The record gives the reactivity of an RNA of 177 nucleotides to 2A3 and DMS.
RNA sequence: GGGAACGACUCGAGUAGAGUCGAAAAUUAUGUCAAAUGGAAUAGCAAUCAAAGAGCAGAAUCAAACAACAAGAUUUUUAGAGUGAUGGGUCAGUUCUUGGGUAUGCCUAACUUGAUUGAGCGGACACGUUUAUCGUCUGUUCGCAGACGAUAAACGAAAAGAAACAACAACAACAAC
Reactivity to 2A3 in 0.01 (KOAc 150mM, MgCl2 10mM, bicine 150mM(pH8.5), 24C), signal-to-noise 3, nucleotides 027 to 126: u170u080a060u140g120u110c090a070a110a080u100g030g000a100a180u100a130g050c000a000a060u070c010a170a010a000g070a020g000c040a000g070a080a050u030c000a050a040a190c070a030a030c010a080a070g040a090u010u040u020u260u210a080g060a130g100u070g060a100u040g010g000g040u030c000a040g000u020u080c020u030u080g020g020g020u180a080u030g000c020c020u060a050a040c060u050u030g000a100u040u010g000a000g050c090g060g000a000c000a000
Reactivity to DMS in 0.01 (KOAc 150mM, MgCl2 10mM, bicine 150mM(pH8.5), 24C), signal-to-noise 3, nucleotides 027 to 126: u030u030a090u050g020u000c070a020a070a160u010g040g010a120a040u050a130g000c040a040a060u030c030a010a040a050g000a030g010c020a070g000a050a040u010c070a100a110a090c220a040a090c110a090a100g000a080u030u010u020u010u060a050g000a170g000u050g000a070u020g000g000g000u010c020a060g010u000u000c010u000u000g000g010g020u020a090u010g010c000c090u020a000a040c110u000u010g000a060u010u000g040a110g040c020g020g000a060c130a120

Reactivities are given for positions 27 through 126.
It was measured as part of the RMDB library OK1LIB.
For DMS the reverse transcriptase was MarathonRT.